[RMDB]
RNA sequence: GGGAACGACUCGAGUAGAGUCGAAAAUGCGGUUAGAAGUGGCAUGGUAAGCGGUAUUGCAAUUUGCGGCGGGGGGCUGUUCGCUGGCCCGCACGGUUCAGCGGAGAGGCAUUUUGCUGUGCCACAGCGGCGAGCAUUUAUUCGUAAAUGCUCGCCGAAAAGAAACAACAACAACAAC
Reactivity to DMS in 0.01 (KOAc 150mM, MgCl2 10mM, bicine 150mM(pH8.5), 24C), signal-to-noise 1, nucleotides 027 to 126: u000g030c300g000g000u000u000a030g120a150a090g090u000g040g050c000a030u040g000g000u000a080a140g020c020g000g000u010a010u100u000g010c040a100a060u000u010u030g030c180g000g070c050g000g030g020g020g020g010c050u030g010u030u020c000g000c010u000g000g000c030c000c070g000c070a090c160g000g040u000u000c010a090g070c000g000g000a030g000a170g090g020c040a010u000u000u010u010g000c030u000g000u000g010c010c000a060c100a160g000
Reactivity to 2A3 in 0.01 (KOAc 150mM, MgCl2 10mM, bicine 150mM(pH8.5), 24C), signal-to-noise 2, nucleotides 027 to 126: u220g010c100g090g090u140u180a040g020a300a030g000u010g000g020c090a040u000g000g060u070a030a110g030c140g040g000u110a070u020u210g010c010a040a050u130u060u130g050c070g020g000c030g030g020g000g000g010g010c040u050g100u120u070c010g000c000u020g030g020c000c000c000g030c070a100c080g000g040u150u200c000a000g000c020g000g030a070g000a030g020g050c000a010u000u010u040u050g000c000u000g000u000g040c000c000a000c000a000g000